[RMDB]
RNA sequence: GGGAACGACUCGAGUAGAGUCGAAAAGCUUCCUUGUGAUCCCACAAGGAACAACUCGUGUCAAUGGACUUUUCCGUUAAGCGAGGAACGAGUAGGAAAAGGAAACGUUCCCCAAUCGGAACGAAUGUGGUAUCUUACAUUUCGAUGUAAGAUACCAAAAAGAAACAACAACAACAAC
Reactivity to DMS in 0.01 (KOAc 150mM, MgCl2 10mM, bicine 150mM(pH8.5), 24C), signal-to-noise 9, nucleotides 027 to 126: g020c170u010u000c000c000u000u000g000u010g000a120u020c100c140c020a280c010a020a010g000g010a010a050c150a100a080c010u000c010g010u000g000u020c250a080a030u010g000g010a110c300u020u010u010u010c010c000g000u000u010a100a250g000c020g010a050g000g010a090a080c100g010a080g020u010a090g000g000a030a030a070a060g000g010a060a100a190c010g000u000u000c000c000c020c160a090a090u030c180g010g010a040a020c040g010a100a080u030g010
Reactivity to 2A3 in 0.01 (KOAc 150mM, MgCl2 10mM, bicine 150mM(pH8.5), 24C), signal-to-noise 9, nucleotides 027 to 126: g020c090u010u000c010c000u000u000g020u010g060a240u150c060c100c010a000c000a000a000g010g010a000a000c010a010a010c000u020c010g040u040g110u130c100a050a070u070g040g050a090c080u080u070u150u020c010c000g020u050u080a070a020g020c020g010a030g010g030a040a060c080g020a040g100u110a080g050g090a010a080a050a030g040g020a060a090a030c010g000u000u010c010c000c000c000a040a130u150c080g040g010a030a060c030g020a060a070u210g030

The record gives the reactivity of an RNA of 177 nucleotides to DMS and 2A3. The reactions ran in a buffer of 150 mM KOAc, 10 mM MgCl2 and 150 mM bicine (pH 8.5), at 24 C. Values are in units of 0.01, from 0 to 300, in steps of 10. Values cover nucleotides 27 to 126.